[RMDB]
RNA sequence: GGGAACGACUCGAGUAGAGUCGAAAACAAGUUCCCUGUUGAAGAGGGAACUGAAAUACCGGAGAGUGUUGUUGAAAUAAUACAACGCCUCCCAAAGCAGCUUCCAAAAGGAGGUGUUGCUGACAAGUGGAUGCACCAUUUUGAGAAUAUUUGUAUCCAGAUAGGGGCUAUUCGUAGCCCCUAUCUGAAAAGAAACAACAACAACAAC
Reactivity to 2A3 in 0.01 (KOAc 150mM, MgCl2 10mM, bicine 150mM(pH8.5), 24C), signal-to-noise 1, nucleotides 027 to 156: c060a050a000g000u000u000c010c000c010u000g030u060u130g090a300a240g020a000g130g000g000a000a010c000u000g010a040a040a090u150a070c100c030g000g010a040g010a000g000u020g000u000u030g000u010u060g030a000a040a090u100a110a110u080a040c020a010a010c030g000c010c000u010c000c000c000a050a160a000g020c000a000g000c010u050u070c020c020a170a250a000a080g020g010a000g000g000u030g080u300u070g000c020u060g000a040c040a160a080g050u060g030g020a010u010g020c000a030c130c020a040u000u070u050u220g120a290g000a120a010u060a040u080u070u080g030u020a030u010c000
Reactivity to DMS in 0.01 (KOAc 150mM, MgCl2 10mM, bicine 150mM(pH8.5), 24C), signal-to-noise 1, nucleotides 027 to 156: c040a100a030g000u010u010c000c010c000u000g010u020u020g010a170a300g010a060g010g000g020a050a040c000u020g000a020a110a140u000a080c080c050g030g000a070g020a160g060u010g020u000u000g000u040u000g000a100a140a140u000a200a150u000a050c000a000a020c020g030c000c030u000c000c010c070a060a140a190g000c030a100g010c000u000u010c020c020a070a060a220a190g000g020a040g020g010u020g070u010u010g000c000u000g000a060c110a030a050g030u000g000g020a160u000g030c120a200c120c000a070u010u010u000u010g030a130g070a160a100u000a040u000u000u000g000u000a120u010c000